[RMDB]
The record gives the reactivity of an RNA of 177 nucleotides to DMS and 2A3. The 2A3 profile rests on 1,928 reads. Values cover nucleotides 27 to 126. Values are in units of 0.01, from 0 to 300, in steps of 10.
RNA sequence: GGGAACGACUCGAGUAGAGUCGAAAAUGCCGGUGCGGUGAAUAAGGCAGUAAGUUUGCAUGCGUGCAAACCGAUGAGCCGUCAUUGACCUAGUGUGACUCUGCCGAUAUGGAUUAGGCGCACCGGCCGCUGGAUCCACAUUCGUGUGGAUCCAGCGAAAAGAAACAACAACAACAAC
Reactivity to DMS in 0.01 (KOAc 150mM, MgCl2 10mM, bicine 150mM(pH8.5), 24C), signal-to-noise 1, nucleotides 027 to 126: u020g000c030c000g000g000u000g040c000g020g000u010g000a000a000u000a300a170g000g000c020a020g000u000a300a220g040u000u000u000g010c000a080u030g010c210g000u000g000c000a000a000a000c000c030g000a290u030g000a130g020c300c070g000u000c000a000u000u000g000a180c000c040u030a000g020u000g000u000g040a040c020u000c000u000g000c000c000g000a000u000a000u020g000g000a000u000u000a010g010g000c000g110c040a010c000c010g020g000c020
Reactivity to 2A3 in 0.01 (KOAc 150mM, MgCl2 10mM, bicine 150mM(pH8.5), 24C), signal-to-noise 3, nucleotides 027 to 126: u100g000c010c010g030g000u010g030c040g090g100u260g050a000a000u040a060a040g010g000c000a000g010u030a090a010g000u020u000u000g000c040a000u050g050c120g300u040g000c010a000a000a050c000c010g030a050u180g120a050g120c080c100g010u000c000a010u000u010g030a070c010c000u000a000g000u010g000u000g000a010c000u010c000u130g000c000c000g030a050u060a000u300g050g010a000u000u000a010g000g000c000g000c000a000c010c000g010g000c000